[RMDB]
RNA sequence: GGGAACGACUCGAGUAGAGUCGAAAAGCUCUCCUGGUAGCUUCGGCUCCAGCAAUCAUCAGGGGAUGCCUGUAAACCCGAAAUGAUUGUCAUACAGAACAGGAUCGUCGUGCAGCACGUUGGGGGCGAAGCGACUAAAACUUACCCAACUCAUCCAGACAUUUAAGAAGUUCGCUUCUUAAAUGUCAAAAGAAACAACAACAACAAC
Reactivity to DMS in 0.01 (KOAc 150mM, MgCl2 10mM, bicine 150mM(pH8.5), 24C), signal-to-noise 2, nucleotides 027 to 156: g000c020u010c020u010c050c140u010g040g020u000a020g020c000u000u010c120g070g000c000u000c010c070a110g010c000a050a020u020c020a020u000c010a300g030g010g000g040a120u000g020c160c050u000g000u000a060a100a260c010c000c010g000a150a110a020u000g010a040u000u010g030u000c060a070u010a160c060a090g000a110a090c070a110g030g000a090u000c040g000u000c020g040u000g020c120a230g010c040a040c100g010u000u000g010g000g010g000g040c070g010a130a280g020c000g000a050c060u000a030a000a020a070c130u000u000a090c010c020c000a000a010c030u000c110a210u010c040c020a300
Reactivity to 2A3 in 0.01 (KOAc 150mM, MgCl2 10mM, bicine 150mM(pH8.5), 24C), signal-to-noise 6, nucleotides 027 to 156: g050c030u030c010u030c030c040u040g090g110u300a010g000c010u060u040c190g090g000c000u000c010c000a000g000c000a000a010u020c000a000u010c030a010g000g010g000g010a010u060g000c000c000u010g010u050a120a130a040c000c000c010g010a030a020a010u020g000a010u030u030g020u120c040a040u120a260c110a040g120a120a010c000a010g020g010a020u010c010g000u000c000g020u070g080c250a020g000c010a040c040g000u010u000g000g000g000g010g000c000g010a010a000g000c000g000a000c000u020a010a000a020a040c060u130u170a150c010c000c010a000a010c030u070c080a100u050c040c030a020